[RMDB]
RNA sequence: GGGAACGACUCGAGUAGAGUCGAAAACACUGCAGGAGAGGCCGCUUGAGGGAUCCCCGGGGAAACGUCAAGCGAAUCUGGGAAGGGAGCGUACCUGGGUCGAUCGUGCGCGUUGGAGGAGACUCCUCAUUGUUAAACACUUCGGUGUUUAACAAUGAAAAGAAACAACAACAACAAC
Reactivity to 2A3 in 0.01 (KOAc 150mM, MgCl2 10mM, bicine 150mM(pH8.5), 24C), signal-to-noise 1, nucleotides 027 to 126: c020a010c040u110g020c050a050g000g070a070g010a030g090g000c060c010g010c040u050u050g040a040g000g020g040a050u020c000c000c060c040g230g030g010g100a020a100a040c040g140u030c030a040a000g020c010g020a020a020u000c010u020g000g020g070a080a030g040g010g000a060g040c020g010u060a050c020c020u010g050g020g020u030c020g020a050u030c060g020u010g040c000g000c010g100u090u090g040g010a010g000g000a020g020a020c020u000c000c010u000
Reactivity to DMS in 0.01 (KOAc 150mM, MgCl2 10mM, bicine 150mM(pH8.5), 24C), signal-to-noise 3, nucleotides 027 to 126: c080a110c060u010g010c050a020g020g000a120g000a140g000g030c180c040g020c020u000u000g010a050g010g010g000a190u000c020c020c060c180g010g010g020g030a030a050a270c050g000u010c040a020a080g000c020g000a040a050u010c060u000g000g010g000a100a060g020g000g010a060g000c070g020u010a090c030c070u000g010g000g010u000c090g000a090u010c100g000u010g010c050g010c090g010u010u000g000g010a070g000g000a190g010a220c030u010c010c040u000

Structure probing data (2A3 and DMS) for a 177-nucleotide construct. The 2A3 profile rests on 1,961 reads. In probing experiments dimethyl sulfate is read out at A N1 and C N3, which are open when not base-paired. Conditions: 150 mM KOAc, 10 mM MgCl2 and 150 mM bicine (pH 8.5), 24 C.